Overview:
An RNA of 177 nucleotides, treated with 2A3 and DMS and read out base by base. For 2A3 the reverse transcriptase was SuperScript II with manganese. The RNA was probed in 150 mM KOAc, 10 mM MgCl2 and 150 mM bicine (pH 8.5) at 24 C. As a SHAPE reagent, 2A3 marks flexible, mostly unpaired nucleotides at the ribose 2'-OH. The data come from the RNA Mapping Database (RMDB), library M2PK50. The 2A3 profile rests on 1,187 reads.

RNA sequence: GGGAACGACUCGAGUAGAGUCGAAAAUUGUACACCUUCGGGUGUACAAGCUGUCUAGUCGCUAGCAAACGAUCAAAGCUAGCGACUAGACUUUAUUCAUCGCGACGUGCGCUUUCGAGCGCACGAAGUUAUAGCCUGAGUUCGCUCAGGCUAUAACAAAAGAAACAACAACAACAAC
Reactivity to 2A3 in 0.01 (KOAc 150mM, MgCl2 10mM, bicine 150mM(pH8.5), 24C), signal-to-noise 1, nucleotides 027 to 126: u010u020g000u000a000c000a000c000c000u040u040c220g100g000g000u000g020u020a000c000a000a000g010c020u010g000u000c030u000a000g000u010c000g000c030u010a000g010c010a050a080a200c110g180a180u240c090a040a140a000g000c000u010a000g050c000g020a010c010u010a000g000a000c000u010u040u010a020u000u040c010a050u190c070g010c020g140a160c020g010u000g000c000g030c000u150u030u130c300g080a000g010c050g020c010a000c000g000a000a000
Reactivity to DMS in 0.01 (KOAc 150mM, MgCl2 10mM, bicine 150mM(pH8.5), 24C), signal-to-noise 4, nucleotides 027 to 126: u000u000g010u000a010c000a000c000c000u000u020c210g030g020g020u000g010u000a000c000a000a030g000c260u000g000u000c000u000a000g000u000c010g030c000u010a000g010c000a050a140a130c230g010a110u010c200a080a140a110g010c000u000a000g000c000g000a010c000u000a000g010a010c000u000u010u010a040u000u000c070a110u000c110g010c140g000a160c030g020u000g010c000g020c000u000u000u000c160g000a010g010c010g020c000a000c000g000a020a080